RNA sequence: GGGAACGACUCGAGUAGAGUCGAAAACAGUGCCCCCAGUUGCAUAGCUCUGGGAGAUGACAUCCACCUUGAAUCUCCACACUGGAACCUCUAGGGCUAUAACUUAGCGUCCAGUGUGAUGUUACCACCUGUAGUUGCACAAGGGGCCCUGGAUGAACGACGUAAAAUAUUUCGAUAUUUUACGUCGAAAAGAAACAACAACAACAAC
Reactivity to DMS in 0.01 (KOAc 150mM, MgCl2 10mM, bicine 150mM(pH8.5), 24C), signal-to-noise 2, nucleotides 027 to 156: c030a060g010u000g010c000c010c010c000c060a170g040u000u000g000c020a080u010a130g000c050u030c020u000g000g000g010a040g040a080u010g010a070c020a120u000c090c070a140c070c070u000u010g010a180a140u010c040u000c090c020a010c040a080c000u010g000g000a010a100c090c040u000c000u000a040g000g020g000c020u010a100u000a070a150c030u000u000a010g000c300g000u000c020c000a050g000u000g000u000g010a030u000g000u000u010a040c050c000a100c040c010u000g030u000a060g030u000u000g000c040a090c030a140a080g010g030g010g030c040c080c010u000g000g010a110u010g020a080a190
Reactivity to 2A3 in 0.01 (KOAc 150mM, MgCl2 10mM, bicine 150mM(pH8.5), 24C), signal-to-noise 2, nucleotides 027 to 156: c000a010g020u010g020c030c000c000c000c020a030g040u240u050g040c040a070u090a120g040c000u010c010u030g010g040g010a080g010a090u070g010a010c020a060u030c090c070a110c090c070u070u190g060a100a070u050c030u040c070c010a000c000a000c000u000g020g000a060a060c010c080u100c010u040a020g010g050g000c060u140a100u060a220a050c000u010u020a000g010c000g040u010c010c000a000g000u000g020u020g010a000u020g030u040u050a040c030c020a070c020c010u040g040u090a020g060u090u020g000c010a010c020a060a040g020g000g000g000c000c060c000u020g020g030a040u120g080a060a050